[RMDB]
RNA sequence: GGGAACGACUCGAGUAGAGUCGAAAAAUACACCAGCAGUAGGACUCAGCGACCGUCACAACAAGGUUGUGCUGGUAUCCGACGGUCGUGUAGCCCUGUCUUGCAGGUUGCCUUGCACUGACGUGCCACACCAUUUACAGAUUCGUCUGUAAAUGAAUCUGUUCAGGAAGUUCGCUUCCUGAACAGAAAAAGAAACAACAACAACAAC
Reactivity to 2A3 in 0.01 (KOAc 150mM, MgCl2 10mM, bicine 150mM(pH8.5), 24C), signal-to-noise 2, nucleotides 027 to 156: a000u160a030c070a010c000c020a010g040c010a000g020u120a010g020g010a040c020u040c120a020g000c000g000a000c000c010g020u010c010a010c040a150a120c050a150a100g100g020u080u000g020u130g010c080u080g050g040u020a090u060c040c030g000a000c000g000g030u000c000g020u010g010u000a050g000c000c000c000u010g030u070c110u120u060g000c000a020g030g000u090u080g100c010c010u090u120g000c020a030c080u160g050a050c110g030u020g020c040c000a050c000a000c050c020a000u000u000u000a000c000a000g040a030u020u130c140g080u020c130u000g000u000a000a000a000u010g000a000a040
Reactivity to DMS in 0.01 (KOAc 150mM, MgCl2 10mM, bicine 150mM(pH8.5), 24C), signal-to-noise 1, nucleotides 027 to 156: a100u020a090c080a200c040c000a090g000c000a080g060u010a020g010g030a000c010u000c100a220g000c050g010a020c020c010g020u000c000a250c120a000a080c100a120a070g040g010u000u000g010u000g030c020u000g050g010u010a030u000c110c000g010a010c000g020g000u000c030g040u010g000u000a030g080c000c010c000u000g010u010c030u000u000g030c010a080g000g000u000u000g070c070c130u000u000g020c040a070c060u000g000a160c120g030u000g030c010c040a100c050a150c120c000a060u000u000u000a030c000a010g030a040u000u010c300g000u010c000u000g020u020a020a020a000u000g000a070a090